[RMDB]
RNA sequence: GGGAACGACUCGAGUAGAGUCGAAAAAUGCCGCAUUCAGAGACGGUUACUCUAGUGGGCUACUGUCGAUCUAGCGUUGACAUCUACAUACUAUAUAGUAAUACCAAUACUCAAGACUACGAAACGGGCCGUAGGUCGUAUUCGUACGACCUACGGCAAAAGAAACAACAACAACAAC
Reactivity to 2A3 in 0.01 (KOAc 150mM, MgCl2 10mM, bicine 150mM(pH8.5), 24C), signal-to-noise 2, nucleotides 027 to 126: a000u100g000c000c060g050c110a100u080u080c080a000g100a070g000a040c000g030g000u110u070a070c000u130c000u050a120g010u130g030g070g000c050u070a040c030u110g020u030c010g030a010u000c100u080a000g110c000g020u000u080g000a050c000a010u070c060u000a080c010a150u130a030c060u030a010u050a040u120a300g030u120a050a060u000a130c010c010a000a000u110a030c030u030c030a090a030g000a120c060u020a130c130g110a000a110a000c000g000g050